[RMDB]
RNA sequence: GGGAACGACUCGAGUAGAGUCGAAAAGAAAGAAAGAAAAGGCCAAAGAAGCGCACGAAAAGAAAAGAAAAACGUGCGCGUCGGAAUGCACGACCGACCAGAAAGGCCAAGAAAUCGUGCAUGAAAACAUACGCAGGAUGUUCGCAUCCUGCGUAUGAAAAGAAACAACAACAACAAC
Reactivity to DMS in 0.01 (KOAc 150mM, MgCl2 10mM, bicine 150mM(pH8.5), 24C), signal-to-noise 2, nucleotides 027 to 126: g000a080a140a110g030a150a150a040g000a060a080a180a090g020g010c020c000a060a060a050g010a300a150g040c010g010c000a000c000g000a030a000a110a230g030a070a110a090a110g020a110a060a060a030a030c030g020u000g000c000g000c010g000u000c000g000g010a100a020u010g000c040a010c020g010a110c000c000g000a000c020c220a180g000a090a080a120g020g000c020c010a040a050g000a090a040a030u010c000g000u000g010c000a010u010g020a060a040a120a100
Reactivity to 2A3 in 0.01 (KOAc 150mM, MgCl2 10mM, bicine 150mM(pH8.5), 24C), signal-to-noise 2, nucleotides 027 to 126: g180a020a050a010g120a010a090a010g060a010a070a000a010g020g000c020c030a210a010a000g040a100a020g070c000g030c010a020c030g050a000a110a010a040g290a040a120a030a000g070a020a020a020a070a020c000g000u010g000c020g020c000g000u000c000g000g000a140a180u020g000c000a000c000g040a010c000c030g010a000c000c000a020g040a070a080a000g050g000c020c020a000a010g020a000a020a000u000c000g000u000g000c000a000u030g020a000a010a000a000
The data come from the RNA Mapping Database (RMDB), library OK1LIB. This 177-nucleotide RNA was probed chemically with DMS and 2A3. For 2A3, 1,938 sequencing reads were counted. The DMS profile rests on 2,262 reads. The RNA was probed in 150 mM KOAc, 10 mM MgCl2 and 150 mM bicine (pH 8.5) at 24 C. Reactivities are rounded to 0.1 and cut off at 0 and 3.